[RMDB]
An RNA of 177 nucleotides, treated with 2A3 and DMS and read out base by base. It was measured as part of the RMDB library M2PK50.

RNA sequence: GGGAACGACUCGAGUAGAGUCGAAAAGAGAUGCACUUCGGUGCAUCUCAAACAGAAGUGAAACGCCGUAGCCCCGAUGGUAGUGUGGGGUCUCCCCAUGCGAAAGCAGGUCGUUCGCGACCUGCAACGCAUACCACACGUUCGCGUGUGGUAUGCGAAAAGAAACAACAACAACAAC
Reactivity to 2A3 in 0.01 (KOAc 150mM, MgCl2 10mM, bicine 150mM(pH8.5), 24C), signal-to-noise 1, nucleotides 027 to 126: g000a000g000a000u010g000c000a000c000u010u010c220g050g000u000g030c000a000u000c000u010c010a000a000a000c040a020g170a160a020g080u150g100a090a100a020c030g020c030c040g000u070a060g050c010c000c010c020g030a020u080g060g030u130a070g000u030g010u000g040g020g000g050u070c070u040c010c020c000c000a000u030g000c010g030a050a040a020g000c000a010g040g000u000c010g040u020u050c210g010c020g070a010c000c000u000g000c000a000a000
Reactivity to DMS in 0.01 (KOAc 150mM, MgCl2 10mM, bicine 150mM(pH8.5), 24C), signal-to-noise 1, nucleotides 027 to 126: g010a020g000a000u000g000c000a000c000u000u000c230g010g000u000g000c000a000u000c000u000c000a000a150a080c130a090g000a110a130g010u000g010a100a120a090c090g000c030c010g010u000a070g000c020c000c000c060g030a080u010g010g000u000a070g030u000g060u000g000g000g000g000u010c090u000c010c000c010c030a060u010g000c030g000a070a140a140g010c000a000g000g020u000c000g040u000u030c200g010c030g000a000c000c010u000g000c010a050a000

2A3 adducts were read by reverse transcription with SuperScript II with manganese. For DMS, 1,205 sequencing reads were counted.